Conditions: 150 mM KOAc, 10 mM MgCl2 and 150 mM bicine (pH 8.5), 24 C. Structure probing data (DMS and 2A3) for a 177-nucleotide construct. The 2A3 profile rests on 569 reads. Values cover nucleotides 27 to 126. For DMS, 779 sequencing reads were counted. For DMS the reverse transcriptase was MarathonRT. 2A3 adducts were read by reverse transcription with SuperScript II with manganese.
[RMDB]
RNA sequence: GGGAACGACUCGAGUAGAGUCGAAAAAACUUAAGCAUAUUAAUAAGCGGAGGAAAAGAAACUAACAAGGAUUCCCCUAGUAACGGCGAGUGAAGCGGGAAGAGCUCAAGCUUAAAAUCUCCGUGCAGGCACAUGUUCUAUUCGUAGAACAUGUGCCAAAAGAAACAACAACAACAAC
Reactivity to DMS in 0.01 (KOAc 150mM, MgCl2 10mM, bicine 150mM(pH8.5), 24C), signal-to-noise 1, nucleotides 027 to 126: a040a150c130u000u000a070a040g000c060a110u000a150u080u000a020a040u060a020a130g000c010g000g000a060g000g000a130a020a030a020g020a020a130a020c020u000a060a040c050a080a160g000g000a150u000u000c000c000c000c130u000a130g000u000a140a000c110g000g000c300g000a250g000u000g000a000a220g000c300g040g000g000a030a020g000a190g000c080u040c150a140a040g000c010u070u000a000a230a110a020u000c000u000c000c000g000u060g000c090a090
Reactivity to 2A3 in 0.01 (KOAc 150mM, MgCl2 10mM, bicine 150mM(pH8.5), 24C), signal-to-noise 1, nucleotides 027 to 126: a000a000c070u100u050a070a000g000c000a070u020a020u100u280a110a300u140a210a000g000c040g060g000a040g000g000a050a220a030a000g070a060a020a240c080u070a010a010c180a010a000g000g090a000u010u000c020c000c000c010u000a000g000u000a000a030c030g080g010c210g020a010g000u010g010a000a000g300c050g020g000g000a000a000g000a010g000c000u000c110a050a000g010c000u000u000a090a000a000a000u120c040u000c000c000g000u060g070c070a090